This 177-nucleotide RNA was probed chemically with DMS and 2A3. It was measured as part of the RMDB library M2PK50. Reactivities are given for positions 27 through 126. The 2A3 profile rests on 2,383 reads. The RNA was probed in 150 mM KOAc, 10 mM MgCl2 and 150 mM bicine (pH 8.5) at 24 C. For 2A3 the reverse transcriptase was SuperScript II with manganese.

[RMDB]
RNA sequence: GGGAACGACUCGAGUAGAGUCGAAAAUGCUGAGCUUUCGAGCUCAGCAGAGGGAAGCAAGCAGCGCAACGAGACAAGACGAGCAUAAGAUCGAGCAUGCUACAAUACGGCACUUCGGUGCCGUAAAUAACAUAGCUUUCUUCGGAAAGCUAUGUUAAAAAGAAACAACAACAACAAC
Reactivity to DMS in 0.01 (KOAc 150mM, MgCl2 10mM, bicine 150mM(pH8.5), 24C), signal-to-noise 3, nucleotides 027 to 126: u010g010c000u000g000a020g000c010u000u000u010c180g020a030g010c010u000c000a000g030c010a020g010a080g010g000g000a070a060g010c070a060a060g040c040a030g010c070g030c060a060a050c070g010a080g000a050c040a050a040g000a070c140g000a070g000c030a060u000a050a090g000a090u010c060g000a070g020c100a040u000g000c060u010a030c180a100a130u000a000c010g000g000c000a020c010u010u000c180g020g010u000g000c000c000g020u000a000a040a060
Reactivity to 2A3 in 0.01 (KOAc 150mM, MgCl2 10mM, bicine 150mM(pH8.5), 24C), signal-to-noise 2, nucleotides 027 to 126: u040g000c010u000g000a000g010c000u100u050u230c220g110a000g000c010u010c000a000g000c000a000g000a000g030g080g040a010a050g060c070a020a030g000c000a010g020c000g030c090a060a090c030g020a010g000a090c040a070a020g100a040c060g050a030g030c030a050u060a140a060g030a090u080c020g020a010g020c000a010u050g030c010u070a050c050a020a060u050a050c000g030g000c020a000c000u000u070c230g040g010u000g000c000c010g000u000a000a000a000